[RMDB]
RNA sequence: GGGAACGACUCGAGUAGAGUCGAAAAAAAUUGGUAAUACUGAAUUUCUUCAGUAAUUUGGGAAGAAACUCCUUCAUCCCUAAUCUACAGUGUCAGUGUCUGUGAAAAGGAAGAUUAGGCUGGCAGCACCAUCGGUAUAGUUCGCUAUACCGAUGGUAAAAGAAACAACAACAACAAC
Reactivity to DMS in 0.01 (KOAc 150mM, MgCl2 10mM, bicine 150mM(pH8.5), 24C), signal-to-noise 2, nucleotides 027 to 126: a070a060a070u010u000g000g010u010a100a080u000a040c010u000g000a040a060u010u010u000c110u010u000c000a040g000u000a040a100u000u010u000g000g020g010a060a060g010a050a030a090c100u000c080c010u020u000c110a100u010c040c000c000u000a040a070u000c090u010a070c120a080g010u010g020u000c010a060g010u000g030u000c030u000g000u000g010a060a040a110a110g010g010a080a050g000a080u000u000a030g010g010c100u020g000g010c050a070g020c180
Reactivity to 2A3 in 0.01 (KOAc 150mM, MgCl2 10mM, bicine 150mM(pH8.5), 24C), signal-to-noise 2, nucleotides 027 to 126: a000a000a020u170u050g020g010u070a090a090u000a140c030u010g030a050a100u180u260u000c020u080u010c060a010g050u060a020a040u110u070u010g020g000g010a040a020g030a030a100a010c080u050c040c030u040u080c010a080u060c020c020c000u010a040a040u020c060u110a090c010a110g080u010g020u100c010a000g010u000g090u160c030u060g090u010g050a110a040a050a000g080g010a070a100g020a110u050u080a020g110g000c010u010g020g000c000a050g000c040
Structure probing data (DMS and 2A3) for a 177-nucleotide construct. The DMS profile rests on 1,851 reads. DMS adducts were read by reverse transcription with MarathonRT. The RNA was probed in 150 mM KOAc, 10 mM MgCl2 and 150 mM bicine (pH 8.5) at 24 C. The data come from the RNA Mapping Database (RMDB), library OK2TST. For 2A3 the reverse transcriptase was SuperScript II with manganese.